[RMDB]
RNA sequence: GGGAACGACUCGAGUAGAGUCGAAAACUGCAUCACCUGAUCACUGAUGGCUCAACGGUAUCCGGCGGUACAACUGAAUACUUGUAGCUGCCUUUGGAGCGGGUUGGCUGCAAUCCGAAACGGAGAGAAAACCUAAUUACGUUCGCGUAAUUAGGAACGUAGACUUCUCCUUCGGGAGAAGUCUACGAAAAGAAACAACAACAACAAC
Reactivity to 2A3 in 0.01 (KOAc 150mM, MgCl2 10mM, bicine 150mM(pH8.5), 24C), signal-to-noise 1, nucleotides 027 to 156: c040u070g030c030a010u040c000a000c000c010u030g020a060u070c020a030c030u000g020a030u020g090g010c020u060c080a010a060c040g000g010u110a100u010c060c030g050g000c010g060g060u100a050c050a070a030c010u140g020a140a040u070a200c060u070u100g000u030a010g010c020u010g020c000c000u020u080u080g020g000a030g020c060g060g020g010u200u270g170g040c080u040g000c020a040a000u000c010c000g060a030a170a230c050g030g030a020g000a000g030a050a060a000a010c000c000u000a000a000u010u000a000c000g000u000u000c260g010c000g100u000a000a000u000u010a000g000g010a000a000
This 207-nucleotide RNA was probed chemically with 2A3. Conditions: 150 mM KOAc, 10 mM MgCl2 and 150 mM bicine (pH 8.5), 24 C. The 2A3 profile rests on 539 reads. For 2A3 the reverse transcriptase was SuperScript II with manganese. Source: RMDB library M2RFPK, as collected in RNAgym.